[RMDB]
RNA sequence: GGGAACGACUCGAGUAGAGUCGAAAAGAUAUGGACCAUGCAGAGAGGAUCUCUGUAUCGGAAACGAUACAGAUCUCUACCCACCUCUGGCAUGGUCCUAAGUCAAACCAGAGGUUCGCCUCUGGAACGAUUUCACUAAGUUCGCUUAGUGAAAUCGAAAAGAAACAACAACAACAAC
Reactivity to DMS in 0.01 (KOAc 150mM, MgCl2 10mM, bicine 150mM(pH8.5), 24C), signal-to-noise 5, nucleotides 027 to 126: g000a040u000a300u010g000g000a020c000c000a000u000g020c010a030g000a020g010a070g020g000a090u000c080u000c010u010g010u010a000u000c000g010g000a110a070a150c000g010a000u000a000c000a010g010a010u020c120u020c090u010a210c080c040c220a240c090c000u000c000u000g000g010c000a020u000g010g010u000c000c010u000a010a060g010u000c040a090a100a110c010c000a000g010a010g010g010u000u010c240g010c010c000u000c000u010g000g000a030a070
Reactivity to 2A3 in 0.01 (KOAc 150mM, MgCl2 10mM, bicine 150mM(pH8.5), 24C), signal-to-noise 4, nucleotides 027 to 126: g020a020u050a040u130g000g000a000c000c000a000u010g000c000a010g020a000g030a060g220g050a080u010c020u000c000u050g020u000a000u000c000g010g000a050a050a020c010g000a010u010a010c000a010g000a040u010c060u000c030u180a190c030c030c030a110c030c000u020c010u050g200g090c010a000u000g010g010u000c000c000u000a000a000g010u000c020a040a030a050c000c010a000g000a000g050g030u100u120c300g070c080c000u000c020u020g020g010a010a010
Description: An RNA of 177 nucleotides, treated with DMS and 2A3 and read out base by base. For DMS, 5,549 sequencing reads were counted. The 2A3 profile rests on 11,771 reads. It was measured as part of the RMDB library TTRDEL.